The record gives the reactivity of an RNA of 177 nucleotides to 2A3 and DMS. Reactivities are given for positions 27 through 126. Conditions: 150 mM KOAc, 10 mM MgCl2 and 150 mM bicine (pH 8.5), 24 C. 2A3 adducts were read by reverse transcription with SuperScript II with manganese.
RNA sequence: GGGAACGACUCGAGUAGAGUCGAAAAGAUAUGGACACCCAAGGGAGCUGGAUCGGAAACGAUACAGCAUCGAUCUUGUGGUGUCCUAAGUCAAAGCGUGUUCCAAACUUCGGUUUGGAACACGCAACAUCACAAUAAGCUUCGGCUUAUUGUGAUGAAAAGAAACAACAACAACAAC
Reactivity to 2A3 in 0.01 (KOAc 150mM, MgCl2 10mM, bicine 150mM(pH8.5), 24C), signal-to-noise 4, nucleotides 027 to 126: g020a010u050a040u110g000g000a000c000a000c000c000c010a010a000g090g050g010a020g010c000u010g000g010a010u000c000g010g020a070a040a010c000g000a000u010a030c010a000g010c020a040u180c010g040a080u020c000u020u060g090u300g030g000u000g000u000c000c000u000a000a010g020u000c030a080a090a010g010c010g000u000g000u010u000c010c000a010a010a000c020u060u100c300g110g000u000u000u000g000g010a000a000c000a000c000g000c010a000a000
Reactivity to DMS in 0.01 (KOAc 150mM, MgCl2 10mM, bicine 150mM(pH8.5), 24C), signal-to-noise 6, nucleotides 027 to 126: g000a040u000a300u010g000g000a010c000a010c000c010c000a010a010g000g010g000a040g030c000u000g000g000a030u000c000g000g000a090a060a150c000g020a020u000a020c000a010g020c000a180u000c170g000a050u010c000u000u000g000u010g030g010u000g010u000c000c000u000a000a060g010u000c020a090a100a100g000c000g030u000g000u000u000c000c000a010a010a020c000u000u020c230g030g000u000u000u000g000g000a000a000c000a000c000g010c000a000a060
For DMS, 12,218 sequencing reads were counted.